[RMDB]
RNA sequence: GGGAACGACUCGAGUAGAGUCGAAAAUUAGUAAUCUCUCGCCUCUCCGGUUAGAAAAUGAGCAUAGUUUGGACAGUCCGUUGAGCUCUUCCCCUCCACAGAGCCAACCCAAGCCGAAGAGUUUUUGGGACAUUGAACAUGAGCGGGAAAGGGAAAACUACAUAAUAGUGUUCGCACUAUUAUGUAGAAAAGAAACAACAACAACAAC
Reactivity to DMS in 0.01 (KOAc 150mM, MgCl2 10mM, bicine 150mM(pH8.5), 24C), signal-to-noise 2, nucleotides 027 to 156: u000u010a150g010u000a100a110u010c010u000c030u010c010g030c090c000u000c010u010c000c030g020g050u000u010a080g010a080a060a090a100u000g010a070g030c040a150u000a060g000u010u000u000g010g000a070c050a100g060u000c020c040g010u000u010g020a110g000c020u000c030u000u000c010c020c000c020u000c040c080a120c050a130g020a100g000c030c040a030a170c000c000c020a070a050g010c060c030g030a070a130g020a070g000u000u000u000u000u000g020g010g000a110c080a130u000u010g010a060a070c040a090u000g000a060g030c100g020g010g000a030a020a110g000g010g020a050a050a150a130
Reactivity to 2A3 in 0.01 (KOAc 150mM, MgCl2 10mM, bicine 150mM(pH8.5), 24C), signal-to-noise 2, nucleotides 027 to 156: u130u040a030g100u040a080a180u000c020u020c010u020c080g010c010c010u010c010u000c040c030g070g010u040u070a070g100a020a060a070a140u140g000a030g050c010a060u040a070g080u100u080u040g060g000a030c000a080g030u000c030c030g080u020u050g030a010g020c000u010c000u000u030c040c000c000c000u010c010c050a070c010a020g030a000g020c010c000a000a050c000c000c010a030a010g010c020c010g100a100a060g080a030g050u040u060u030u100u110g030g000g000a010c030a070u100u110g040a010a000c020a040u050g010a000g030c080g010g010g030a060a030a040g010g000g020a020a080a000a010